[RMDB]
RNA sequence: GGGAACGACUCGAGUAGAGUCGAAAAGAUAUGGAGCAUGGGAGCGUACGCAUCGGAAACGAUGCUAUACGCGAAGAACAUGCCUCCUAAGUCAAAAGAUUGCAUUAGCUUCGGCUAAUGCAAUCAAGAACAUCGGUAUCUUCGGAUACCGAUGUUCAAAAGAAACAACAACAACAAC
Reactivity to 2A3 in 0.01 (KOAc 150mM, MgCl2 10mM, bicine 150mM(pH8.5), 24C), signal-to-noise 1, nucleotides 027 to 126: g010a020u040a050u130g010g020a020g000c000a000u020g010g000g000a100g100c000g010u000a010c030g000c000a010u000c010g010g000a050a020a000c010g000a010u000g020c010u010a030u000a000c000g010c050g050a200a070g010a020a010c010a010u020g000c000c010u000c010c000u020a100a020g020u030c020a050a090a040a170g000a000u030u010g010c010a000u000u000a020g000c020u030u060c300g080g020c000u020a010a000u000g000c010a000a000u000c000a000a010
Reactivity to DMS in 0.01 (KOAc 150mM, MgCl2 10mM, bicine 150mM(pH8.5), 24C), signal-to-noise 1, nucleotides 027 to 126: g010a040u000a250u000g000g000a040g010c000a020u000g000g020g000a080g040c010g040u000a050c300g020c010a010u020c000g020g010a040a080a120c020g000a000u000g020c000u000a040u020a010c030g010c050g020a070a070g000a050a130c040a000u000g000c180c050u000c030c000u000a040a150g020u010c010a080a110a100a130g000a000u000u000g010c000a010u000u000a000g030c000u000u000c300g010g000c000u000a000a000u000g010c020a000a000u000c000a020a030